[RMDB]
RNA sequence: GGGAACGACUCGAGUAGAGUCGAAAAAUUGCAGCACAUUCGGUGGUGCCACGGGCUGCAGCGUUGCUGCGACCACAAUGCGCAAGUGCCUCUGCGGAAUCGCGGAUUACCGGGGCUGCUUGCGGUCGAGACACGAAGAAUUCGUUCUUCGUGUCUCAAAAGAAACAACAACAACAAC
Reactivity to 2A3 in 0.01 (KOAc 150mM, MgCl2 10mM, bicine 150mM(pH8.5), 24C), signal-to-noise 6, nucleotides 027 to 126: a000u150u110g000c020a020g030c010a030c020a090u150u150c100g300g060u130g030g030u050g070c050c030a090c110g090g020g000c040u130g030c020a000g010c080g120u100u220g000c020u010g000c010g030a030c000c050a060c050a060a100u260g070c020g000c010a020a000g020u000g020c000c000u060c040u140g100c100g040g080a060a040u100c090g000c120g300g040a030u030u030a140c010c010g000g000g030g000c060u080g000c000u010u010g010c010g000g020u060c070
Reactivity to DMS in 0.01 (KOAc 150mM, MgCl2 10mM, bicine 150mM(pH8.5), 24C), signal-to-noise 4, nucleotides 027 to 126: a060u010u010g030c030a040g010c010a040c100a130u000u010c140g010g010u000g000g000u000g010c020c110a090c140g000g010g020c020u010g010c020a020g010c100g020u000u000g020c020u000g000c010g020a070c030c020a080c200a070a070u000g000c020g020c010a000a010g010u000g000c050c010u000c020u010g040c140g010g010a070a060u000c010g020c180g010g000a050u010u000a090c050c030g000g000g010g010c010u010g010c000u010u000g010c010g010g010u010c110

Structure probing data (2A3 and DMS) for a 177-nucleotide construct. The RNA was probed in 150 mM KOAc, 10 mM MgCl2 and 150 mM bicine (pH 8.5) at 24 C. For DMS, 6,238 sequencing reads were counted.